This 207-nucleotide RNA was probed chemically with DMS and 2A3. Reactivities are rounded to 0.1 and cut off at 0 and 3. It was measured as part of the RMDB library OK3TST. Reactivities are given for positions 27 through 156. The RNA was probed in 150 mM KOAc, 10 mM MgCl2 and 150 mM bicine (pH 8.5) at 24 C. For DMS the reverse transcriptase was MarathonRT.
RNA sequence: GGGAACGACUCGAGUAGAGUCGAAAAUUUAGAAGAUGAAUGUAGCUUUGAUCAUGUUUAGUUUGAGUUGCUGGGACACCUAGGUGUGGUCGGGGGUCAAGCAUUGGUGAUUCAGAAGUCUAGGUUGGAGACACAGUUUUGGGAAUUGCAACAUAGGGAUUACCGUCAUUUUCGAAUGACGGUAAUCAAAAGAAACAACAACAACAAC
Reactivity to DMS in 0.01 (KOAc 150mM, MgCl2 10mM, bicine 150mM(pH8.5), 24C), signal-to-noise 1, nucleotides 027 to 156: u020u000u000a080g010a130a060g000a120u000g000a060a080u000g010u000a110g030c060u020u010u010g020a120u000c030a070u010g000u010u010u000a070g000u000u010u000g000a110g010u010u000g020c040u020g030g030g040a090c050a020c080c040u000a110g010g080u000g010u020g030g000u000c040g020g030g010g020g020u000c020a110a070g030c070a200u000u000g020g030u020g010a080u000u000c000a080g050a090a130g000u000c050u000a060g040g010u000u000g000g000a150g000a060c020a040c050a080g000u000u000u000u000g000g020g020a120a100u000u000g000c050a010a080c110a090u010a150g020g010
Reactivity to 2A3 in 0.01 (KOAc 150mM, MgCl2 10mM, bicine 150mM(pH8.5), 24C), signal-to-noise 2, nucleotides 027 to 156: u090u060u090a060g010a050a000g020a050u080g010a020a140u100g020u080a020g030c020u060u060u110g040a080u050c040a050u130g040u030u140u080a060g000u080u040u120g050a000g010u040u000g020c020u020g000g030g010a020c010a050c070c050u050a050g000g020u020g040u030g050g050u040c040g000g010g000g030g000u060c050a030a020g000c030a070u050u110g030g000u050g040a040u060u020c020a000g020a180a000g080u060c050u120a040g040g110u030u090g030g010a030g000a000c010a000c000a090g010u060u070u110u100g030g020g010a050a060u050u050g020c030a020a050c010a090u140a040g050g070